[RMDB]
RNA sequence: GGGAACGACUCGAGUAGAGUCGAAAAGAAAGAUGGUGGUGAUGUCUGAACUCACGAUGGUCUUCAGAGUCCCUGUUGGUGAGGGGACUGCUGACAAUGUCAGUGGCAACUGCUGAACCAUCAGAAAAGGGCGUCAAUGUUUCGACAUUGACGCCCUAAAAGAAACAACAACAACAAC
Reactivity to 2A3 in 0.01 (KOAc 150mM, MgCl2 10mM, bicine 150mM(pH8.5), 24C), signal-to-noise 1, nucleotides 027 to 126: g070a030a050a020g020a030u070g010g010u010g130g030u010g000a050u070g040u000c090u090g000a130a000c000u000c050a050c080g000a010u000g170g010u020c000u070u020c000a020g000a000g000u000c000c000c000u010g080u100u080g020g220u130g060a170g000g000g000g050a050c000u000g080c000u000g000a180c130a280a300u300g000u030c000a020g000u000g060g030c000a000a000c100u130g140c000u040g110a180a050c000c000a000u000c000a000g110a020a080a000
Notes
The data come from the RNA Mapping Database (RMDB), library RFM100. Structure probing data (2A3) for a 177-nucleotide construct. Values cover nucleotides 27 to 126. Conditions: 150 mM KOAc, 10 mM MgCl2 and 150 mM bicine (pH 8.5), 24 C.